Background: Structure probing data (DMS and 2A3) for a 177-nucleotide construct. It was measured as part of the RMDB library OK1LIB. The 2A3 profile rests on 5,616 reads.
RNA sequence: GGGAACGACUCGAGUAGAGUCGAAAAGAAACAGGCCGAAAGAAAUUUGGCGAAACGGCCUGACAAGGCUCGUAAAGAAUCGCCAUCGUAAAGUAAAGAAAGAAUGAGCCAAAAGAAAAGAAAGAAAGAUUAUAUAGCAGUUCGCUGCUAUAUAAUCAAAAGAAACAACAACAACAAC
Reactivity to DMS in 0.01 (KOAc 150mM, MgCl2 10mM, bicine 150mM(pH8.5), 24C), signal-to-noise 4, nucleotides 027 to 126: g020a150a090a180c030a010g010g010c000c000g000a090a080a130g010a120a120a090u000u010u010g000g000c000g010a060a170a150c020g000g000c000c000u000g030a100c150a090a080g010g020c000u000c000g020u000a100a120a070g000a080a110u000c020g010c000c010a050u010c120g000u020a070a070a100g030u050a070a070a090g000a080a120a110g000a050a010u000g000a010g000c000c000a110a060a080a160g020a100a050a050a060g000a070a080a110g000a120a110a110
Reactivity to 2A3 in 0.01 (KOAc 150mM, MgCl2 10mM, bicine 150mM(pH8.5), 24C), signal-to-noise 4, nucleotides 027 to 126: g060a000a160a000c020a010g010g000c000c000g050a110a090a050g150a030a190a070u190u100u050g010g000c000g000a030a060a010c000g000g020c000c000u000g000a010c030a050a020g000g000c000u010c040g040u110a080a070a040g080a010a080u010c010g000c000c000a020u050c040g010u090a030a100a170g040u060a080a090a100g060a090a110a010g080a030a110u100g000a000g000c020c000a000a060a020a000g050a020a050a010a000g070a060a110a000g020a020a050a000
About this RNA:
The DMS profile rests on 6,546 reads.